[RMDB]
An RNA of 177 nucleotides, treated with DMS and read out base by base. It was measured as part of the RMDB library OK2TST.

RNA sequence: GGGAACGACUCGAGUAGAGUCGAAAAUGAAUGUGGGAGGCCCUAGAAGGUGUUAGCCACUGGACUUGAAAAGAGUUGUUGGACCUAGGAUAGGUCAAUGAGACUCAAAGUCAAGGCAUACUUGUUAUCCGAAUACAGCUUUCGAGCUGUAUUCGGAAAAAGAAACAACAACAACAAC
Reactivity to DMS in 0.01 (KOAc 150mM, MgCl2 10mM, bicine 150mM(pH8.5), 24C), signal-to-noise 1, nucleotides 027 to 126: u000g000a080a070u000g040u000g020g030g000a120g020g000c060c010c020u000a080g020a170a090g030g020u010g040u000u050a120g030c030c050a040c090u030g000g000a040c000u000u000g000a010a090a110a180g000a030g000u000u000g010u020u000g030g000a020c000c000u000a080g040g010a160u000a020g000g010u000c000a020a030u000g010a130g010a010c010u000c010a030a080a130g000u000c020a040a040g000g000c030a070u000a040c070u000u010g000u000u010a170